[RMDB]
RNA sequence: GGGAACGACUCGAGUAGAGUCGAAAAGAUAUGGACAGCUAUGAAGUGGGCCAUGAUGACCUCGGAAACGAGCAAGUGGUCCAUGGAGCUGUCCUAAGUCAAACGUUCACACUUCGGUGUGAACGAACAGGUAACUAAGCUUCGGCUUAGUUACCUGAAAAGAAACAACAACAACAAC
Reactivity to 2A3 in 0.01 (KOAc 150mM, MgCl2 10mM, bicine 150mM(pH8.5), 24C), signal-to-noise 2, nucleotides 027 to 126: g030a010u100a030u130g000g000a000c010a020g000c010u030a100u300g060a080a000g010u020g000g030g010c020c010a000u050g050a240u100g030a140c020c020u000c040g000g070a110a100a090c020g020a000g030c020a120a180g000u010g020g020u000c030c030a000u010g010g000a000g000c000u010g000u010c000c000u010a010a000g020u000c060a180a000a060c040g000u000u040c010a010c000a010c020u090u160c300g160g000u020g010u000g000a000a010c010g020a050a000
Reactivity to DMS in 0.01 (KOAc 150mM, MgCl2 10mM, bicine 150mM(pH8.5), 24C), signal-to-noise 2, nucleotides 027 to 126: g030a050u000a300u010g010g000a040c000a030g000c010u000a260u000g060a120a150g040u010g000g010g000c000c000a000u000g010a080u010g000a040c300c000u010c000g010g000a110a070a160c030g000a010g000c030a060a080g000u000g000g000u000c000c010a000u010g010g010a000g010c000u000g020u000c000c000u000a000a060g010u010c010a130a050a190c010g000u000u000c010a000c000a010c000u010u010c170g010g000u000g010u000g030a030a000c020g000a020a050